[RMDB]
RNA sequence: GGGAACGACUCGAGUAGAGUCGAAAAGAAAAGAGCCGCAUGCGCAGAUAUGCGCAAUACCGUAACCGCGGCACGGUACACCGGCAAGCCAUCUAAGAGAGCCGGUGAUAGAUGGCAUACAAAAAAACAAUAUCAUGCAGUUCGCUGCAUGAUAUUGAAAAGAAACAACAACAACAAC
Reactivity to 2A3 in 0.01 (KOAc 150mM, MgCl2 10mM, bicine 150mM(pH8.5), 24C), signal-to-noise 3, nucleotides 027 to 126: g080a010a150a020a030g070a020g010c010c020g040c100a150u140g010c010g000c010a000g050a210u250a130u280g000c000g000c010a010a040u040a020c000c010g030u020a080a050c040c070g000c010g040g000c000a000c000g010g000u010a020c020a010c030c000g020g000c040a110a000g020c000c010a030u020c030u150a180a030g060a030g020a010g220c000c020g000g010u000g000a010u030a010g010a010u050g010g030c030a020u090a130c140a070a110a020a020a000a000a010
Reactivity to DMS in 0.01 (KOAc 150mM, MgCl2 10mM, bicine 150mM(pH8.5), 24C), signal-to-noise 3, nucleotides 027 to 126: g000a060a070a170a140g040a260g040c020c010g040c040a110u010g020c010g010c000a030g010a180u000a090u020g010c000g000c000a130a120u010a040c000c010g000u000a070a120c030c040g010c010g020g030c000a020c000g010g000u000a090c120a110c030c000g020g000c040a090a160g010c020c040a010u010c050u000a070a100g020a200g030a230g010c010c000g010g000u000g000a030u000a040g010a040u000g000g010c030a190u020a120c130a010a000a060a040a030a060a170
This 177-nucleotide RNA was probed chemically with 2A3 and DMS. For 2A3 the reverse transcriptase was SuperScript II with manganese. It was measured as part of the RMDB library M2PK90. As a SHAPE reagent, 2A3 marks flexible, mostly unpaired nucleotides at the ribose 2'-OH. The reactions ran in a buffer of 150 mM KOAc, 10 mM MgCl2 and 150 mM bicine (pH 8.5), at 24 C. The DMS profile rests on 2,173 reads.